[RMDB]
RNA sequence: GGGAACGACUCGAGUAGAGUCGAAAAACUGCCAUACGUGGCAGAAACACGCCUUACCAGGACUAAACAGCGUGUCUAAAAAACAGUCCUUCAUACCUGCUCUGGAGGGUAGAUCAGGAAUACUAAAAAAAUCGGGUGAAGUUCGCUUCACCCGAAACUCCAUCAAAUGGUUCGCCAUUUGAUGGAGAAAAGAAACAACAACAACAAC
Reactivity to 2A3 in 0.01 (KOAc 150mM, MgCl2 10mM, bicine 150mM(pH8.5), 24C), signal-to-noise 1, nucleotides 027 to 156: a010c000u010g000c000c000a000u000a050c190g040u010g000g040c000a000g000a000a010a000c010a000c000g030c000c010u030u050a030c010c090a030g000g020a020c010u060a100a080a000c000a010g000c000g010u000g030u090c130u070a030a000a030a030a030a010c020a000g010u000c060c000u020u100c020a020u030a210c000c000u000g010c030u060c010u030g020g020a060g010g010g040u050a010g000a030u000c030a000g000g030a050a050u100a120c110u200a120a010a070a070a000a000a070u030c000g040g020g020u010g000a010a010g010u010u130c170g010c110u000u000c000a000c030c000c000g000a000a000a000